RNA sequence: GGGAACGACUCGAGUAGAGUCGAAAAGAGCUGAAGUACAGCAAGAACGACGACAUCCUUGGCACAGCGUCGAAGAUAAGCGUGCCGAUUGCCAAGGAUUAACGGCACGCGAGGCGAAGACGCCAGAGCCUAGUCGCGAGUUCGCUCGCGACUAGGCAAAAGAAACAACAACAACAAC
Reactivity to 2A3 in 0.01 (KOAc 150mM, MgCl2 10mM, bicine 150mM(pH8.5), 24C), signal-to-noise 1, nucleotides 027 to 126: g150a010g000c000u000g020a120a040g100u060a140c000a000g000c010a130a020g110a090a060c110g110a000c020g140a020c000a070u000c000c000u020u000g000g000c020a060c030a100g120c080g020u070c070g160a030a070g020a090u080a110a000g010c020g000u000g030c030c030g060a170u040u240g000c000c000a010a010g000g000a000u050u030a000a010c010g000g000c000a000c000g010c000g000a010g000g000c050g050a170a140g090a040c000g010c000c000a100g050a000
Description
Source: RMDB library OK1LIB, as collected in RNAgym. This 177-nucleotide RNA was probed chemically with 2A3. Values cover nucleotides 27 to 126.